[RMDB]
RNA sequence: GGGAACGACUCGAGUAGAGUCGAAAAUUCGCAGUCGUUGAUGAUCUCUGCUGCCGACAGCAGUACUGGUGCUAAUUUUGUCCUUAGGUUGCUGCUUCCUAGGACGGCCGCUGCGAUGAGCUUGCCGACUACGUAGCUAGUUCGCUAGCUACGUAGUAAAAGAAACAACAACAACAAC
Reactivity to DMS in 0.01 (KOAc 150mM, MgCl2 10mM, bicine 150mM(pH8.5), 24C), signal-to-noise 7, nucleotides 027 to 126: u000u000c020g020c030a030g010u010c210g020u000u010g010a110u010g010a080u000c050u000c060u000g010c010u000g010c050c090g010a100c200a090g000c020a020g010u000a030c090u000g010g020u010g010c090u010a070a130u000u010u010u000g010u000c010c010u010u010a030g010g010u000u000g010c070u000g000c070u000u000c010c020u000a030g000g010a040c020g000g000c060c110g010c010u000g000c020g010a030u000g000a120g010c220u000u000g010c010c030g000
Reactivity to 2A3 in 0.01 (KOAc 150mM, MgCl2 10mM, bicine 150mM(pH8.5), 24C), signal-to-noise 4, nucleotides 027 to 126: u020u000c030g000c030a010g070u110c070g080u180u190g040a150u080g040a080u050c030u000c010u070g020c010u030g000c010c070g210a130c050a020g000c010a000g010u060a060c060u060g040g010u080g050c050u070a120a210u090u170u180u260g000u020c000c000u060u110a020g010g000u070u100g070c110u070g040c040u070u000c000c010u010a010g000g020a020c000g010g000c040c010g020c010u000g000c010g020a020u050g020a010g010c030u050u080g040c020c010g010